[RMDB]
RNA sequence: GGGAACGACUCGAGUAGAGUCGAAAACUUGUUGCAAAAAAUGGAGUUGUCAUGAAAACUGAGGCUAUUCAUCCCUUCUUCAGUGAAUCCACAUGGCCCCAGGUGAUUUCAAGUGGGAACAUUUUGCGUCAGCAGUGGGAUUCGUCCCACUGCUGACAAAAGAAACAACAACAACAAC
Reactivity to DMS in 0.01 (KOAc 150mM, MgCl2 10mM, bicine 150mM(pH8.5), 24C), signal-to-noise 1, nucleotides 027 to 126: c060u000u010g020u030u000g010c120a010a030a090a080a100a120u000g010g000a030g010u000u000g000u000c010a060u000g000a100a060a160a150c010u000g010a030g000g010c190u010a100u010u040c270a020u000c080c090c010u000u000c000u000u000c090a030g000u000g030a140a060u000c090c050a060c060a040u020g000g000c020c030c010c000a050g000g030u000g010a080u010u010u000c020a020a020g020u000g000g000g010a090a060c100a100u010u030u000u000g000c230

An RNA of 177 nucleotides, treated with DMS and read out base by base. DMS adducts were read by reverse transcription with MarathonRT. Source: RMDB library OK2TRN, as collected in RNAgym.